[RMDB]
RNA sequence: GGGAACGACUCGAGUAGAGUCGAAAAGUUCACCUACAAGAACGUACGGUGUUGAGGCCCUGUCCGCCGCUGCGCUGCCACCUACUCUUCGCGCCGCUAGUCGAGCGGACUCCAGGCGAUGCUUCCCUACUCUCUCACGCUCUUUUUCUUUUGCGCACAAUUUACUACUGUUCGCAGUAGUAAAUUGAAAAGAAACAACAACAACAAC
Reactivity to DMS in 0.01 (KOAc 150mM, MgCl2 10mM, bicine 150mM(pH8.5), 24C), signal-to-noise 2, nucleotides 027 to 156: g030u000u010c030a120c040c020u000a240c080a090a100g050a050a060c070g030u000a070c100g020g030u000g000u000u000g000a100g020g040c010c020c040u020g010u000c090c120g000c010c000g060c020u000g030c020g000c020u000g000c050c050a100c080c070u020a140c080u000c060u010u000c050g020c050g040c080c020g000c060u000a080g010u000c050g010a120g060c010g030g020a040c030u000c150c040a110g010g020c010g010a130u000g000c030u000u000c010c010c010u010a120c030u000c020u000c030u000c020a160c030g000c010u010c010u000u000u000u000u000c000u000u020u000u000g020c040g000c150a300
Reactivity to 2A3 in 0.01 (KOAc 150mM, MgCl2 10mM, bicine 150mM(pH8.5), 24C), signal-to-noise 8, nucleotides 027 to 156: g060u060u070c020a030c030c010u030a030c040a150a140g090a300a040c120g020u050a020c130g000g010u030g040u070u120g070a090g080g010c020c010c020u010g010u000c000c010g000c000c000g000c020u020g010c030g000c050u070g040c020c030a090c030c040u170a180c060u090c070u220u230c100g000c030g000c020c030g010c050u110a030g090u280c070g040a060g010c000g000g000a010c000u000c030c040a020g010g000c040g040a050u110g040c030u040u030c000c010c000u030a100c020u040c010u000c020u030c030a040c070g050c020u070c040u100u090u020u040u040c020u030u080u070u120g090c190g000c030a030